An RNA of 177 nucleotides, treated with DMS and 2A3 and read out base by base. Conditions: 150 mM KOAc, 10 mM MgCl2 and 150 mM bicine (pH 8.5), 24 C.
RNA sequence: GGGAACGACUCGAGUAGAGUCGAAAAGACGUGAGGCGGAGCCUCGUUAAAAAUCCUAUCUGACAAGCGUUUAGUUCGGAUGAGCCGCGCCAUCGUUAAAAACGCGGAAGCCAACUGGUGGGAGUAAGCUUAGACGUGAUUUCGAUCACGUCUAAGCAAAAGAAACAACAACAACAAC
Reactivity to DMS in 0.01 (KOAc 150mM, MgCl2 10mM, bicine 150mM(pH8.5), 24C), signal-to-noise 2, nucleotides 027 to 126: g030a030c090g010u040g000a020g020g010c090g050g010a110g020c010c000u000c030g000u040u040a030a090a120a080a110u020c020c010u000a020u010c040u000g000a080c140a020a140g000c100g010u000u020u000a140g000u000u000c040g000g020a030u000g000a100g040c010c000g000c060g000c060c000a020u010c180g000u060u030a020a040a040a030a080c030g000c040g020g020a130a140g040c110c070a030a110c030u030g020g060u000g000g020g000a080g010u040a080a180
Reactivity to 2A3 in 0.01 (KOAc 150mM, MgCl2 10mM, bicine 150mM(pH8.5), 24C), signal-to-noise 3, nucleotides 027 to 126: g060a020c020g150u190g010a000g000g040c040g080g030a040g130c010c010u010c000g010u020u010a010a070a030a000a000u020c010c030u040a050u000c100u060g080a040c030a100a120g000c030g010u050u110u080a040g020u040u100c080g030g000a010u000g000a010g090c020c000g030c010g020c000c010a100u120c080g140u150u180a160a000a000a000a000c000g000c000g030g040a020a000g020c010c010a000a020c030u050g000g000u040g020g040g040a040g040u080a100a000

For 2A3 the reverse transcriptase was SuperScript II with manganese.
The DMS profile rests on 2,358 reads.